[RMDB]
Structure probing data (2A3 and DMS) for a 177-nucleotide construct. 2A3 is a SHAPE reagent: it acylates the 2'-hydroxyl of flexible nucleotides of all four kinds. The DMS profile rests on 1,072 reads. Conditions: 150 mM KOAc, 10 mM MgCl2 and 150 mM bicine (pH 8.5), 24 C.
RNA sequence: GGGAACGACUCGAGUAGAGUCGAAAAGAUAUGGAAACACUUGGACAUGAGUUGAUAUCGGAAACGAUAUCUGCUCAACAGCCAACAUGUGUUUCCUAAGUCAAACGUGGACCUUCGGGUCCACGAAGUUGAUGUCAUCGUUCGCGAUGACAUCAACAAAAGAAACAACAACAACAAC
Reactivity to 2A3 in 0.01 (KOAc 150mM, MgCl2 10mM, bicine 150mM(pH8.5), 24C), signal-to-noise 1, nucleotides 027 to 126: g010a000u000a010u050g000g020a000a030a000c010a000c010u020u030g020g020a020c110a300u300g000a040g000u000u020g000a000u010a010u020c000g000g040a030a010a000c010g020a000u010a000u060c000u000g000c000u030c070a060a060c050a000g080c010c030a050a030c080a140u130g010u000g040u000u000u000c000c000u000a030a000g020u000c020a000a000a200c030g000u000g010g000a010c000c000u020u040c300g190g000g000u000c000c040a000c010g000a000a000
Reactivity to DMS in 0.01 (KOAc 150mM, MgCl2 10mM, bicine 150mM(pH8.5), 24C), signal-to-noise 1, nucleotides 027 to 126: g000a040u000a160u020g010g000a000a000a010c000a010c010u010u000g030g000a130c090a200u030g000a020g010u010u000g010a010u000a000u010c000g010g010a040a060a060c010g010a000u000a010u000c000u000g010c010u000c010a190a060c300a200g010c200c050a010a140c300a040u000g020u020g000u000u000u000c010c000u000a000a110g000u000c020a030a140a260c020g030u000g010g000a010c000c000u000u020c190g040g050g010u000c000c000a010c000g010a020a090